The record gives the reactivity of an RNA of 177 nucleotides to DMS.

RNA sequence: GGGAACGACUCGAGUAGAGUCGAAAAAAUUUGAGCGUCGCACACACACAGACUAAGUGUGCUGCUGACAGAGCCUAAACCGCUCUGUCAGUGUGCGAGAUAUCGUUCUUAAUGUGAGCAGAAGAAAAUGGAAUAACCACUUCGGUGGUUAUUCCAUAAAAGAAACAACAACAACAAC
Reactivity to DMS in 0.01 (KOAc 150mM, MgCl2 10mM, bicine 150mM(pH8.5), 24C), signal-to-noise 1, nucleotides 027 to 126: a000a090u000u010u000g000a040g000c080g020u000c000g010c000a030c050a300c010a000c000a040c000a240g000a130c180u040a100a110g000u000g000u000g000c300u030g030c020u010g010a030c000a000g000a040g000c000c040u000a030a160a100c300c300g010c000u000c000u000g000u030c000a000g030u000g040u000g000c000g010a010g000a140u000a050u050c030g000u000u000c000u000u000a010a080u010g000u000g010a070g040c030a040g000a040a020g000a050a090a120

For DMS the reverse transcriptase was MarathonRT.